[RMDB]
RNA sequence: GGGAACGACUCGAGUAGAGUCGAAAACUUUACAUCUUUACAGCAGGGGUUUUUACCCUGGGUUCGUGAGUUCAGGGUUUCGUGAAUGGAAUGAGAGGGAAAGUUGCAUCUUUAUUUCAUUAACCUGUAACUGAAAUUUAGCAUUUCCUUCAAUUGACAGUAAUGAUCCAUUCGUGGAUCAUUACUGAAAAGAAACAACAACAACAAC
Reactivity to DMS in 0.01 (KOAc 150mM, MgCl2 10mM, bicine 150mM(pH8.5), 24C), signal-to-noise 2, nucleotides 027 to 156: c030u010u000u010a060c030a110u010c030u010u000u010a060c040a070g020c060a100g020g010g010g010u010u000u010u000u010a050c020c010c020u000g000g040g030u000u000c070g040u010g000a130g030u010u000c030a050g030g000g010u000u020u000c040g010u000g000a070a040u010g000g000a080a080u000g000a180g020a090g040g040g020a130a060a140g020u010u000g010c010a140u000c010u000u000u000a030u020u010u000c050a110u000u000a060a070c040c030u000g020u010a040a050c180u000g000a040a080a070u000u000u000a080g020c040a140u000u010u000c010c010u000u010c040a000a220u000u010g010a260
Reactivity to 2A3 in 0.01 (KOAc 150mM, MgCl2 10mM, bicine 150mM(pH8.5), 24C), signal-to-noise 4, nucleotides 027 to 156: c030u120u120u180a060c040a110u060c030u100u200u100a100c090a040g050c030a030g000g030g020g040u040u120u150u200u300a100c000c010c000u010g000g000g000u030u080c060g040u070g100a110g040u000u040c030a020g000g000g030u010u060u140c070g030u070g080a050a040u060g020g040a050a060u080g030a060g010a010g060g010g040a030a070a080g140u180u100g030c010a050u010c040u010u110u060a030u020u030u030c010a010u000u050a070a110c020c040u100g050u120a050a050c030u050g020a010a040a070u100u100u070a050g000c040a030u030u000u000c000c000u030u070c020a040a150u060u120g040a030